[RMDB]
RNA sequence: GGGAACGACUCGAGUAGAGUCGAAAAAGAAUUACUAUUAUUCUCAGCGUUAUACGCGUCAAGGUUAGGCGGUUCUUGAAGUAUGGUGCCAUCUAUGGUGCCAUCUAUGGUGCCGUCAGCGAUGUUAUCUAAAUGGUGUAUAUCGCCAUCAUAGUCGUAUUGUCUUGGUAUUCGUACCAAGACAAUAAAAAGAAACAACAACAACAAC
Reactivity to DMS in 0.01 (KOAc 150mM, MgCl2 10mM, bicine 150mM(pH8.5), 24C), signal-to-noise 3, nucleotides 027 to 156: a040g000a070a060u010u000a110c100u000a130u000u010a070u000u000c020u010c040a130g040c030g050u000u010a060u000a070c050g020c020g040u020c040a080a110g020g020u010u000a060g020g010c000g040g010u000u000c020u000u000g010a150a150g000u010a030u000g010g030u000g010c000c000a050u000c160u000a130u010g040g050u000g010c000c000a010u000c040u000a140u000g010g020u000g040c000c000g000u010c020a020g020c050g020a100u000g030u000u000a080u000c080u000a070a060a050u010g000g020u010g000u000a070u000a080u000c000g020c000c030a060u000c050a070u000a060g000u000c110g010
Reactivity to 2A3 in 0.01 (KOAc 150mM, MgCl2 10mM, bicine 150mM(pH8.5), 24C), signal-to-noise 5, nucleotides 027 to 156: a000g100a050a050u190u080a080c070u060a040u240u020a060u190u050c050u010c050a040g000c020g040u060u070a060u030a100c050g010c040g080u100c100a100a070g120g060u100u100a060g020g000c020g000g010u000u040c010u030u080g070a090a010g040u260a020u030g000g000u010g000c010c010a050u100c120u230a240u230g000g000u010g000c010c000a000u010c000u000a040u020g000g000u000g000c000c000g010u000c010a000g010c020g040a050u090g070u200u130a140u140c080u130a060a140a090u160g050g000u040g040u010a030u020a010u170c020g000c030c020a050u060c040a020u060a060g070u090c080g070
Chemical mapping of a 207-nucleotide RNA with DMS and 2A3. For DMS, 7,999 sequencing reads were counted. Source: RMDB library OK3TST, as collected in RNAgym. The RNA was probed in 150 mM KOAc, 10 mM MgCl2 and 150 mM bicine (pH 8.5) at 24 C. 2A3 adducts were read by reverse transcription with SuperScript II with manganese. Reactivities are given for positions 27 through 156.